This 177-nucleotide RNA was probed chemically with DMS and 2A3. For 2A3, 5,038 sequencing reads were counted. The reactions ran in a buffer of 150 mM KOAc, 10 mM MgCl2 and 150 mM bicine (pH 8.5), at 24 C. Source: RMDB library TTRDEL, as collected in RNAgym.
RNA sequence: GGGAACGACUCGAGUAGAGUCGAAAAGAUAUGGAUCCUUGGGAGCUAAAGUCGGAAACGACUUGGUAGCGAAGAACACUGGGAUCCUAAGUCAAAACAAUUAACUCAGUUCGCUGAGUUAAUUGAAGAAACCUUAGAUGUUCGCAUCUAAGGUUUCAAAAGAAACAACAACAACAAC
Reactivity to DMS in 0.01 (KOAc 150mM, MgCl2 10mM, bicine 150mM(pH8.5), 24C), signal-to-noise 5, nucleotides 027 to 126: g010a030u000a030u010g000g000a000u000c000c000u000u000g010g010g010a040g040c010u010a250a020a010g000u000c000g020g010a010a010a020c010g010a010c000u000u000g010g060u000a020g020c000g010a080a130g030a100a180c020a010c300u010g020g010g000a020u000c000c000u000a000a080g000u010c010a090a090a100a210c010a020a010u000u000a000a010c000u000c000a010g010u000u010c280g010c010u000g010a010g010u000u000a000a010u000u000g000a130a130
Reactivity to 2A3 in 0.01 (KOAc 150mM, MgCl2 10mM, bicine 150mM(pH8.5), 24C), signal-to-noise 2, nucleotides 027 to 126: g010a000u020a010u050g000g000a000u000c010c000u030u030g020g000g000a020g000c010u040a080a010a010g000u010c000g000g000a020a000a010c010g010a000c000u000u000g040g150u120a000g000c000g180a270a010g000a030a000c050a020c240u150g080g110g000a000u000c020c000u000a010a000g000u000c020a000a070a070a150c010a010a020u000u010a010a000c000u000c000a010g050u070u130c210g060c150u000g010a000g010u000u010a000a000u010u010g000a020a020